[RMDB]
RNA sequence: GGGAACGACUCGAGUAGAGUCGAAAAAACCUGUCCCGUGAGGCAGGCAAGGAGCGCGAUAAAGUAGAAGGGUGAAGUCUAUACUGUGUGCAGUAGGGCUCGCUUGGCUAUAAAUUUCAAGUCUCCUCAUUCACUUCGUUUUCGAACGAAGUGAAUGAAAAGAAACAACAACAACAAC
Reactivity to 2A3 in 0.01 (KOAc 150mM, MgCl2 10mM, bicine 150mM(pH8.5), 24C), signal-to-noise 4, nucleotides 027 to 126: a000a020c010c010u010g030u050c010c010c020g100u190g010a130g010g010c010a010g000g010c010a020a010g010g000a010g010c020g000c050g010a040u040a080a090a010g020u030a010g010a040a030g050g030g000u020g120a110a010g010u030c000u020a300u010a060c000u020g080u050g150u160g240c000a000g000u000a020g010g000g000c000u000c000g000c010u000u010g010g000c000u000a010u030a060a140a140u050u060u030c010a020a040g010u010c000u020c000c020u000
Reactivity to DMS in 0.01 (KOAc 150mM, MgCl2 10mM, bicine 150mM(pH8.5), 24C), signal-to-noise 4, nucleotides 027 to 126: a080a060c000c000u000g000u000c000c010c170g020u030g000a110g010g000c020a010g000g010c180a090a020g000g010a010g000c020g030c300g010a030u010a030a090a150g000u000a010g000a050a050g010g000g010u000g000a120a010g040u000c000u000a080u010a010c010u010g020u060g040u050g000c000a010g030u000a040g010g000g000c000u000c000g010c000u000u010g000g010c000u000a040u020a030a130a150u020u020u000c030a050a300g000u020c000u000c000c010u000